[RMDB]
This 177-nucleotide RNA was probed chemically with 2A3 and DMS. 2A3 adducts were read by reverse transcription with SuperScript II with manganese. For 2A3, 1,001 sequencing reads were counted. The RNA was probed in 150 mM KOAc, 10 mM MgCl2 and 150 mM bicine (pH 8.5) at 24 C. Source: RMDB library OK2TRN, as collected in RNAgym.
RNA sequence: GGGAACGACUCGAGUAGAGUCGAAAAACGGUACAAACGGGAGACACCUGGCCCUUGACGGCGGAUCAAGACCCCCUAUUGUGUAUGACAAGGUGAAGGACUUUGCCACUUAUCCCCUCCCUAAGGGACCAACUUAUACCUUCGGGUAUAAGUUGGUAAAAGAAACAACAACAACAAC
Reactivity to 2A3 in 0.01 (KOAc 150mM, MgCl2 10mM, bicine 150mM(pH8.5), 24C), signal-to-noise 1, nucleotides 027 to 126: a000c020g010g080u040a030c040a080a140a020c110g000g020g000a070g010a040c040a010c070c000u030g120g000c000c000c000u000u080g020a060c050g020g060c050g000g050a100u070c050a080a030g070a240c000c000c000c000c030u020a120u130u170g030u010g070u070a090u130g060a070c010a060a000g070g020u050g070a010a010g080g000a000c030u040u030u040g030c040c000a050c000u040u030a090u250c050c000c000c000u000c010c020c000u010a040a010g020g010g000
Reactivity to DMS in 0.01 (KOAc 150mM, MgCl2 10mM, bicine 150mM(pH8.5), 24C), signal-to-noise 3, nucleotides 027 to 126: a070c090g010g010u000a050c100a040a070a120c200g010g000g000a040g000a110c090a060c040c020u000g020g000c040c050c030u000u000g000a060c080g020g030c050g010g000a070u000c070a080a060g010a190c040c010c010c020c020u010a080u000u000g010u000g000u020a070u010g010a060c040a060a060g000g010u000g010a100a110g020g020a070c070u000u010u010g000c030c020a050c100u010u000a110u010c020c010c000c010u000c000c010c010u020a040a070g020g000g000